Chemical mapping of a 177-nucleotide RNA with DMS. Values cover nucleotides 27 to 126. The DMS profile rests on 571 reads. The data come from the RNA Mapping Database (RMDB), library TTRDEL.
RNA sequence: GGGAACGACUCGAGUAGAGUCGAAAAGAUAUGGAGCCUAGGGAGCUCCGUGUCGGAAACGACACCGGGAGCAUCGAUCUAGGACCCUCCUAAGUCAAAGUCGUGGAAAGUUCGCUUUCCACGACAACUCCCUGCUAUUCUUCGGAAUAGCAGGGAGAAAAGAAACAACAACAACAAC
Reactivity to DMS in 0.01 (KOAc 150mM, MgCl2 10mM, bicine 150mM(pH8.5), 24C), signal-to-noise 1, nucleotides 027 to 126: g020a000u000a000u040g000g000a060g030c030c000u010a010g000g000g000a000g000c000u000c020c020g010u030g010u030c000g000g000a020a000a000c000g000a000c020a000c300c300g000g000g000a020g000c010a240u010c230g000a060u030c000u000a010g000g000a150c190c150c030u000c000c010u000a000a060g000u000c020a130a150a130g010u000c000g040u000g000g090a040a010a010g040u000u040c230g020c030u000u000u000c000c000a050c000g000a000c000a020a030